RNA sequence: GGGAACGACUCGAGUAGAGUCGAAAAACAAGGCAAACGUGAUGGGGCUGUUUUCUGCGCUUAACCCCGUCUUCCAAUAAUUGGAAAAAUGCAGUGCAUUGCACUUGAUUGCACAACUCCUCGUCAGUUAUACUACUAAAUUCGUUUAGUAGUAUAAAAAAGAAACAACAACAACAAC
Reactivity to 2A3 in 0.01 (KOAc 150mM, MgCl2 10mM, bicine 150mM(pH8.5), 24C), signal-to-noise 9, nucleotides 027 to 126: a000c040a030a030g070g000c020a050a050a030c090g060u060g030a030u030g010g000g010g010c060u040g130u050u060u060u050c050u070g020c060g000c040u090u100a070a070c000c000c000c000g010u000c000u020u010c010c000a050a080u240a240a140u210u090g010g030a030a030a010a000a020u120g010c020a010g020u000g040c040a090u040u100g010c030a040c150u050u130g060a100u080u110g020c020a020c010a050a070c030u010c010c010u030c020g080u040c020a010g000
Reactivity to DMS in 0.01 (KOAc 150mM, MgCl2 10mM, bicine 150mM(pH8.5), 24C), signal-to-noise 9, nucleotides 027 to 126: a070c090a070a090g010g010c050a050a060a080c160g010u010g010a040u010g010g000g000g020c120u010g000u010u000u020u010c060u010g010c090g010c080u010u010a140a150c070c010c000c050g000u020c060u000u000c000c000a030a180u030a100a150u020u000g000g000a000a040a060a080a110u010g010c030a070g010u000g010c040a060u000u010g010c020a060c130u010u010g000a060u000u000g000c030a030c080a070a080c080u000c010c010u000c050g010u000c060a110g010